[RMDB]
RNA sequence: GGGAACGACUCGAGUAGAGUCGAAAAACGGGCAGUGGCGAUGGCAACGCGGCAGCCGCAGGGUCGACUUCUUCGCAGCCGCAACAGACGGGACACGGGCAAAGAGGGGAACUCGUUCUGUUGGAAGCUCGUGGUAUAUUUUCGAAUAUACCACGAGAAAAGAAACAACAACAACAAC
Reactivity to 2A3 in 0.01 (KOAc 150mM, MgCl2 10mM, bicine 150mM(pH8.5), 24C), signal-to-noise 9, nucleotides 027 to 126: a000c050g000g030g000c030a050g030u040g060g020c040g050a080u060g040g000c040a070a030c060g010c010g040g010c020a020g030c030c020g010c030a040g040g020g030u060c020g040a070c020u070u020c010u050u040c080g010c050a030g020c010c020g020c010a010a020c020a010g040a020c010g010g000g010a030c040a020c090g040g020g010c060a080a100a020g060a060g010g010g000g010a020a030c010u010c040g030u110u020c020u020g030u010u010g020g030a060a020g030
Reactivity to DMS in 0.01 (KOAc 150mM, MgCl2 10mM, bicine 150mM(pH8.5), 24C), signal-to-noise 4, nucleotides 027 to 126: a120c060g000g020g020c050a040g040u000g010g000c100g010a100u020g010g010c080a070a070c100g010c050g010g020c060a140g010c050c070g020c110a110g000g010g000u000c040g010a120c150u000u020c030u030u030c070g010c040a110g010c050c040g000c010a030a050c080a030g000a040c040g000g000g000a120c130a090c090g010g010g000c100a070a120a090g020a110g000g000g010g000a060a100c070u000c010g010u000u000c030u010g010u000u000g000g010a050a070g010